[RMDB]
An RNA of 177 nucleotides, treated with DMS and 2A3 and read out base by base.
RNA sequence: GGGAACGACUCGAGUAGAGUCGAAAACCGAAUUAACAGGAGUCAUGAUCGCUUCAUCGUGGUUAAUUUAGCGUAAACUUAAAUAAUUCGCAGAAAUAACGCCUUACAAAAAACCAAAGGUUGUCCUGGUAAUGAUCAUUUUCGAAUGAUCAUUACCAAAAGAAACAACAACAACAAC
Reactivity to DMS in 0.01 (KOAc 150mM, MgCl2 10mM, bicine 150mM(pH8.5), 24C), signal-to-noise 2, nucleotides 027 to 126: c040c030g000a060a090u130u020a070a040c040a160g040g000a120g010u000c090a080u000g000a090u050c020g030c050u000u000c020a060u030c060g000u030g030g000u000u050a060a020u010u000u010a090g020c010g020u000a070a100a060c130u000u010a060a080a040u000a100a120u010u000c090g010c030a210g000a110a060a060u000a070a060c050g000c080c030u020u010a070c180a000a090a060a040a030a020c080c090a050a140a080g010g010u010u010g000u000c100c100u040
Reactivity to 2A3 in 0.01 (KOAc 150mM, MgCl2 10mM, bicine 150mM(pH8.5), 24C), signal-to-noise 9, nucleotides 027 to 126: c020c000g010a060a090u160u070a070a030c040a050g080g020a030g040u050c050a070u150g070a080u090c040g010c030u030u010c020a060u070c070g070u070g030g040u060u070a080a050u090u060u130a030g000c000g020u040a050a100a140c060u100u110a130a040a070u140a070a110u100u060c030g010c060a010g130a050a120a040u110a030a030c030g020c010c010u080u100a070c120a040a120a020a020a020a020c060c040a110a070a010g090g000u020u030g040u030c000c020u030
Source: RMDB libraries RFM100 and RFMREP, as collected in RNAgym. The reactions ran in a buffer of 150 mM KOAc, 10 mM MgCl2 and 150 mM bicine (pH 8.5), at 24 C.